[RMDB]
RNA sequence: GGGAACGACUCGAGUAGAGUCGAAAAUGGAGCUUUACUGUAGUUUGAUAUUGAGUGUUUGUACCACAUGUACAGGAUAGGUAGGAGCCGAUGAGACCGGAACGCUAGUUUCGGAGGAGGCGCUGGUGGGAUACUACCCUUGUGUUAUGAACCCUCUGCAUGUAACCUUGUUCGCAAGGUUACAUGCAAAAGAAACAACAACAACAAC
Reactivity to 2A3 in 0.01 (KOAc 150mM, MgCl2 10mM, bicine 150mM(pH8.5), 24C), signal-to-noise 2, nucleotides 027 to 156: u090g050g010a070g050c030u140u110u120a110c050u080g040u140a110g060u080u070u090g130a090u110a100u200u130g000a040g000u030g000u000u000u030g010u010a010c000c010a010c000a020u030g010u030a020c000a020g030g000a010u020a000g000g010u010a000g000g030a080g000c000c020g140a300u010g000a010g010a010c000c000g000g010a010a000c000g000c060u070a010g010u000u000u000c000g000g000a000g000g010a000g000g020c010g000c000u000g000g000u000g000g000g000a010u000a030c000u010a000c000c000c000u000u000g010u000g000u010u010a010u030g020a010a000c000c070c000u000c030u040